Overview:
The record gives the reactivity of an RNA of 177 nucleotides to DMS. The reactions ran in a buffer of 150 mM KOAc, 10 mM MgCl2 and 150 mM bicine (pH 8.5), at 24 C. The DMS profile rests on 671 reads. Reactivities are rounded to 0.1 and cut off at 0 and 3. Values cover nucleotides 27 to 126. For DMS the reverse transcriptase was MarathonRT.
[RMDB]
RNA sequence: GGGAACGACUCGAGUAGAGUCGAAAAAAGGCGGUAGACCUGUCACUCAAAAUUCCAUAUCUUCCAUAGGGCAGGGUCCCUUGAGAUCAUCUUAUUCUAUGGCUUACGACUCACCUGUGGAUAGAGAUACGGUCAGUAGUUUCGACUACUGACCGUAAAAAGAAACAACAACAACAAC
Reactivity to DMS in 0.01 (KOAc 150mM, MgCl2 10mM, bicine 150mM(pH8.5), 24C), signal-to-noise 1, nucleotides 027 to 126: a090a050g020g000c030g000g000u010a120g070a160c140c030u000g010u000c080a120c050u010c070a030a090a040a170u000u010c010c010a100u000a110u000c010u000u000c000c000a030u000a040g000g000g010c210a100g000g010g010u000c000c120c130u000u000g060a030g000a060u000c040a070u000c190u000u010a140u010u000c190u010a060u000g000g000c280u010u030a050c300g000a030c000u010c020a080c010c000u010g040u000g000g000a040u040a030g010a100g010a170